[RMDB]
RNA sequence: GGGAACGACUCGAGUAGAGUCGAAAAUCAGCAUACAGAUAACCAAUACCGUGAUGAUGUGUAGUUCUGGCCCCCAUUUACCGUCAAAGAUCAGCACACCGAUAAUGGGUGUAAAGGGCAAAAUAGCUCACAGGGGUCAAUUCGUUGACCCCUGUGAAAAAGAAACAACAACAACAAC
Reactivity to DMS in 0.01 (KOAc 150mM, MgCl2 10mM, bicine 150mM(pH8.5), 24C), signal-to-noise 1, nucleotides 027 to 126: u000c050a090g000c040a120u000a190c040a090g000a050u010a070a180c040c050a070a110u000a050c050c110g040u000g020a170u000g050a080u000g040u040g010u000a120g000u010u000c080u000g050g000c110c010c000c000c010a110u010u040u000a030c000c090g000u020c060a000a020a050g010a130u010c150a090g020c110a070c010a050c110c030g050a110u010a040a130u000g030g000g000u000g050u040a000a140a080g000g000g050c070a080a030a100a050u020a060g000c100